Chemical mapping of a 177-nucleotide RNA with 2A3 and DMS. The 2A3 profile rests on 2,070 reads. The reactions ran in a buffer of 150 mM KOAc, 10 mM MgCl2 and 150 mM bicine (pH 8.5), at 24 C. 2A3 adducts were read by reverse transcription with SuperScript II with manganese. It was measured as part of the RMDB library TTRDES.

[RMDB]
RNA sequence: GGGAACGACUCGAGUAGAGUCGAAAAGAUAUGGAGCAUGGGUGGACAACAGCUAUAGUUCGGAAACGAACUGAUAGACAUGUCCUCCAUGCUCCUAAGUCAAAAGAUGUCACUUCGGUGACAUCAAGAAUUCAAGCCUGUUCGCAGGCUUGAAUUCAAAAGAAACAACAACAACAAC
Reactivity to 2A3 in 0.01 (KOAc 150mM, MgCl2 10mM, bicine 150mM(pH8.5), 24C), signal-to-noise 2, nucleotides 027 to 126: g000a010u030a010u100g000g010a000g090c010a010u010g050g040g180u300g170g000a010c060a300a040c100a300g000c000u010a010u000a020g000u000u040c010g000g000a000a000a000c010g000a030a000c000u030g070a050u000a000g020a010c150a290u300g010u020c000c000u050c000c000a000u000g010c000u000c000c010u010a000a000g020u010c000a000a010a010a050g000a000u030g000u000c000a010c030u050u130c300g100g000u020g030a040c010a000u010c000a000a010
Reactivity to DMS in 0.01 (KOAc 150mM, MgCl2 10mM, bicine 150mM(pH8.5), 24C), signal-to-noise 1, nucleotides 027 to 126: g000a010u000a200u000g010g000a020g030c010a000u020g000g010g030u000g050g010a010c020a070a030c210a130g000c000u000a000u000a050g020u000u000c010g000g020a030a030a120c000g020a000a020c000u000g000a010u010a010g010a030c100a300u030g000u000c000c000u010c000c000a010u000g000c010u000c000c000u000a000a030g000u010c010a110a160a110a080g000a000u000g020u000c010a020c020u020u010c200g000g000u000g020a000c010a010u000c010a080a070